[RMDB]
RNA sequence: GGGAACGACUCGAGUAGAGUCGAAAAGAUAUGGACAGGAACUACUCCGGUAGCUCGUUGAAAUCGGAAACGAUGGAGAGCAAACGGAGCCUGUCCUAAGUCAAACGUCAGUGUUCGCACUGACGAAGCUAAAGUCUUACUUCGGUAAGACUUUAGCAAAAGAAACAACAACAACAAC
Reactivity to DMS in 0.01 (KOAc 150mM, MgCl2 10mM, bicine 150mM(pH8.5), 24C), signal-to-noise 4, nucleotides 027 to 126: g020a070u000a300u000g010g000a020c010a000g000g010a060a030c040u010a300c020u000c020c020g010g000u000a300g010c000u000c000g000u010u020g000a110a120a030u000c000g000g000a100a060a140c010g010a010u000g000g010a100g000a010g000c000a020a120a290c010g000g000a020g000c000c000u000g000u000c000c000u010a010a060g000u000c040a070a100a240c010g010u000c000a000g010u000g030u000u020c210g020c010a000c000u000g010a000c010g000a030a040
Reactivity to 2A3 in 0.01 (KOAc 150mM, MgCl2 10mM, bicine 150mM(pH8.5), 24C), signal-to-noise 4, nucleotides 027 to 126: g030a000u050a050u120g000g010a000c010a010g030g040a070a120c070u210a050c010u300c010c030g000g010u080a010g000c000u000c030g190u260u080g030a040a050a000u010c020g000g050a090a040a030c010g010a000u020g030g010a020g000a000g020c000a110a180a000c000g010g000a000g000c000c000u000g000u000c000c000u010a030a010g000u000c050a120a010a040c020g010u000c000a000g000u010g080u080u170c290g020c120a000c000u000g000a000c010g010a040a010
Chemical mapping of a 177-nucleotide RNA with DMS and 2A3.
For 2A3 the reverse transcriptase was SuperScript II with manganese.
For DMS the reverse transcriptase was MarathonRT.
The DMS profile rests on 3,756 reads.
Reactivities are given for positions 27 through 126.